[RMDB]
RNA sequence: GGGAACGACUCGAGUAGAGUCGAAAAUAAAAGAUCACAACAAGUAUACGUUGAAAAGUAUACAUUAGUACGAUAAGCGCAAGAUCAACUUGCGAGAUAUGGCGCAACAUAUCAAACAACAAAAAAAUCAUCAUCUUAGGUUCGCCUAAGAUGAUGAAAAAGAAACAACAACAACAAC
Reactivity to DMS in 0.01 (KOAc 150mM, MgCl2 10mM, bicine 150mM(pH8.5), 24C), signal-to-noise 2, nucleotides 027 to 126: u010a080a100a110a100g020a080u000c010a030c060a130a090c090a080a100g010u010a000u000a000c020g010u010u000g000a110a060a090a150g010u010a000u000a010c000a040u010u000a060g010u010a130c100g000a060u010a110a150g010c000g000c000a010a000g010a220u020c210a150a160c000u000u010g020c000g020a080g020a010u000a010u000g010g000c250g010c160a090a100c000a010u010a010u000c010a070a090a110c090a030a020c070a020a020a040a040a060a040a130
Reactivity to 2A3 in 0.01 (KOAc 150mM, MgCl2 10mM, bicine 150mM(pH8.5), 24C), signal-to-noise 3, nucleotides 027 to 126: u140a000a130a010a030g110a040u070c050a010c030a130a030c020a090a000g010u010a010u000a010c030g030u050u130g200a130a140a010a030g000u010a000u010a020c000a010u020u060a030g040u050a030c050g010a080u040a150a070g090c000g000c000a000a010g020a060u100c030a040a250c020u010u000g000c010g010a020g000a000u020a000u030g090g000c140g020c150a010a090c000a030u020a000u040c010a000a080a020c040a040a000c070a000a030a020a000a000a020a080